[RMDB]
RNA sequence: GGGAACGACUCGAGUAGAGUCGAAAAAGAUGGAAGCCAAGCAAUGACCGAAAUGGUGAUCUCUCCAGCUGAGCGACAGUCGAUUCGUCGUCUGCCCUUUAGCUUCGCCAAUCGCUUUAAGUUGGUAUAGGUAUAGGCAUUUCGAUGCCUAUACCUAAAAAGAAACAACAACAACAAC
Reactivity to DMS in 0.01 (KOAc 150mM, MgCl2 10mM, bicine 150mM(pH8.5), 24C), signal-to-noise 3, nucleotides 027 to 126: a150g010a090u010g010g020a130a130g030c040c050a040a070g020c040a050a080u020g010a060c090c020g020a070a070a080u000g000g010u010g010a040u010c050u000c050u010c040c070a060g010c010u010g010a040g020c180g000a030c060a020g010u000c020g010a050u000u010c130g020u010c030g040u000c000u000g010c010c010c030u010u010u010a020g010c020u010u010c070g010c000c020a030a150u010c050g010c090u010u000u000a050a110g010u000u010g010g000u000a200
Reactivity to 2A3 in 0.01 (KOAc 150mM, MgCl2 10mM, bicine 150mM(pH8.5), 24C), signal-to-noise 2, nucleotides 027 to 126: a000g130a010u190g010g100a070a080g000c000c000a000a000g070c060a040a170u100g030a050c040c020g040a060a040a160u150g050g000u050g030a080u050c070u000c020u010c040c050a020g020c000u050g000a000g020c050g030a010c000a020g030u070c000g040a080u060u060c100g030u000c010g020u020c090u030g010c010c010c010u080u020u070a020g000c020u080u100c000g010c010c020a000a050u070c050g000c080u130u120u150a150a070g010u040u040g030g020u040a060